[RMDB]
RNA sequence: GGGAACGACUCGAGUAGAGUCGAAAAGAUAUGGACGUCUGUGUAUCAAGCGUGUCGGAAACGACCGCUGACCACGCACACAUGACGUCCUAAGUCAAACAGUCAUGUGCUUCGGCACAUGACUGAAGUCCAUGUGAACGUUCGCGUUCACAUGGACAAAAGAAACAACAACAACAAC
Reactivity to DMS in 0.01 (KOAc 150mM, MgCl2 10mM, bicine 150mM(pH8.5), 24C), signal-to-noise 2, nucleotides 027 to 126: g010a030u000a070u010g000g010a000c000g030u000c000u000g040u000g020u010a100u010c080a100a050g030c000g020u020g050u000c000g000g010a020a030a080c010g000a000c000c010g000c000u000g020a080c280c210a100c280g010c260a020c000a000c020a010u010g000a010c010g010u000c000c000u000a000a040g000u000c000a140a090a230c050a000g000u000c000a010u000g000u000g010c000u010u000c250g010g020c000a000c010a000u000g000a030c010u000g000a010a100
Reactivity to 2A3 in 0.01 (KOAc 150mM, MgCl2 10mM, bicine 150mM(pH8.5), 24C), signal-to-noise 2, nucleotides 027 to 126: g010a010u010a010u070g010g000a000c000g000u010c000u010g000u030g030u060a210u300c090a040a000g020c000g000u300g030u150c010g000g020a010a040a000c010g000a000c010c000g020c000u000g000a020c020c060a180c230g300c030a010c000a000c000a050u300g000a000c000g000u030c000c000u000a000a000g000u030c020a070a070a070c000a010g000u000c000a010u010g010u010g030c000u050u110c230g120g000c000a020c000a000u000g000a010c030u000g000a020a010

This 177-nucleotide RNA was probed chemically with DMS and 2A3.
The reactions ran in a buffer of 150 mM KOAc, 10 mM MgCl2 and 150 mM bicine (pH 8.5), at 24 C.